RNA sequence: GGGAACGACUCGAGUAGAGUCGAAAAAGAGUAGACAGAGAUUCUGGCGGUUGAGGGUUUCUUCGUAGAGGUUGAUCGAUUCUUAAUGUCCUGUGGAUUUUAAGUUCCCAAAACUGUUGCUUAGGACCGUAUAAUCCUAUUUCGAUAGGAUUAUACGAAAAGAAACAACAACAACAAC
Reactivity to 2A3 in 0.01 (KOAc 150mM, MgCl2 10mM, bicine 150mM(pH8.5), 24C), signal-to-noise 6, nucleotides 027 to 126: a000g070a010g030u120a020g010a030c040a020g080a000g020a070u080u020c010u050g040g010c020g040g010u040u060g030a050g040g030g010u030u080u080c010u030u010c020g030u020a030g010a030g030g050u060u060g020a080u050c020g030a030u100u020c020u030u120a100a050u070g020u030c000c030u090g030u150g070g020a040u010u050u010u070a040a030g000u010u010c000c000c010a010a040a010a010c050u030g020u040u020g000c050u020u060a030g020g060a030c010
Reactivity to DMS in 0.01 (KOAc 150mM, MgCl2 10mM, bicine 150mM(pH8.5), 24C), signal-to-noise 8, nucleotides 027 to 126: a070g000a070g010u000a060g010a080c070a100g010a140g010a110u010u010c050u000g000g020c060g010g000u010u010g000a090g010g000g010u000u010u010c030u000u000c090g020u010a080g000a080g010g010u010u000g000a090u000c050g000a120u000u000c030u010u010a030a050u010g000u000c010c020u010g020u010g010g010a070u000u000u000u000a030a110g010u000u000c000c000c000a060a050a080a080c160u000g010u000u000g010c040u010u000a070g000g000a230c190